RNA sequence: GGGAACGACUCGAGUAGAGUCGAAAAAAAUUCUUACGCUUUAGCUGCUUAAUAACCAGCUAGCGUGAUCCUUCCGACUUCGCUCAAGGGUCGGGUCUGGGUCUCAAAUUAUUGAGCUACGGUUAAUGUUGCCACCUGAGGCAUUAACAAGAGACUAUCUUAUGUAAAUGUUCGCAUUUACAUAAGAAAAAGAAACAACAACAACAAC
Reactivity to DMS in 0.01 (KOAc 150mM, MgCl2 10mM, bicine 150mM(pH8.5), 24C), signal-to-noise 3, nucleotides 027 to 156: a050a060a080u010u010c080u010u010a040c010g010c010u000u000u000a020g050c000u000g000c040u000u000a190a120u010a180a160c300c010a020g030c020u000a010g010c020g010u000g000a040u000c020c020u010u010c020c000g020a030c010u000u000c090g010c020u000c050a070a050g000g000g000u000c010g010g030g010u000c080u010g010g000g020u000c020u010c030a050a090a160u000u000a060u000u000g010a090g010c010u000a150c060g000g020u000u010a030a030u000g020u000u000g020c050c020a100c120c030u010g010a300g000g000c000a010u000u000a000a030c020a050a060g000a170g000a140c070u000a160
Reactivity to 2A3 in 0.01 (KOAc 150mM, MgCl2 10mM, bicine 150mM(pH8.5), 24C), signal-to-noise 6, nucleotides 027 to 156: a000a000a010u140u040c020u030u050a000c010g010c010u150u130u110a000g000c000u000g000c010u060u050a050a020u050a060a050c020c000a000g000c000u000a010g000c000g000u000g010a010u020c010c000u040u020c000c000g000a000c000u010u020c080g000c000u000c010a000a010g000g000g000u000c000g010g000g030u100c200u110g020g020g020u010c040u010c100a090a130a080u260u180a100u050u030g000a000g000c010u000a010c020g000g000u000u000a000a000u010g020u040u060g060c060c060a090c050c100u070g050a060g020g020c000a000u000u010a000a000c010a010a010g020a010g090a030c030u120a100
Structure probing data (DMS and 2A3) for a 207-nucleotide construct. For DMS, 7,328 sequencing reads were counted. The reactions ran in a buffer of 150 mM KOAc, 10 mM MgCl2 and 150 mM bicine (pH 8.5), at 24 C. For 2A3 the reverse transcriptase was SuperScript II with manganese. It was measured as part of the RMDB library ARCHII.